[RMDB]
This 177-nucleotide RNA was probed chemically with 2A3 and DMS. Conditions: 150 mM KOAc, 10 mM MgCl2 and 150 mM bicine (pH 8.5), 24 C. The data come from the RNA Mapping Database (RMDB), library OK2TST. Values cover nucleotides 27 to 126. 2A3 adducts were read by reverse transcription with SuperScript II with manganese.
RNA sequence: GGGAACGACUCGAGUAGAGUCGAAAAGACGAUUGAAACUGCCCGUGUCAGAACAGUAGACAUAUUAACCAACUGAGAGCGGAUCUGUUCCGAGGGCAUCGAUUGCAAAGCGGGUCCGUCGGGGCGAGACCCCAUAGUGAUUCGUCACUAUGGGGUCAAAAGAAACAACAACAACAAC
Reactivity to 2A3 in 0.01 (KOAc 150mM, MgCl2 10mM, bicine 150mM(pH8.5), 24C), signal-to-noise 2, nucleotides 027 to 126: g030a040c110g060a090u090u180g060a090a060a000c060u070g010c000c000c010g050u050g040u020c060a040g020a170a150c010a030g070u070a000g050a030c040a060u210a070u140u180a110a070c010c010a020a070c070u070g050a020g000a010g180c030g040g000a020u060c030u060g020u030u000c030c020g050a090g000g010g010c010a020u060c000g090a090u020u120g020c070a000a030a130g020c020g000g000g030u000c030c010g100u050c010g000g010g000g000c020g010a030
Reactivity to DMS in 0.01 (KOAc 150mM, MgCl2 10mM, bicine 150mM(pH8.5), 24C), signal-to-noise 3, nucleotides 027 to 126: g010a080c100g010a100u000u000g000a100a070a130c090u000g000c020c000c040g000u010g000u000c060a100g000a040a120c080a080g010u000a060g000a080c090a100u000a070u010u010a070a160c090c100a090a070c090u000g010a090g020a120g010c040g020g000a090u010c050u000g010u000u000c010c020g000a130g010g000g020c040a030u000c040g010a070u000u000g030c200a070a090a140g000c030g010g020g000u000c010c040g020u010c050g020g000g010g010c020g000a110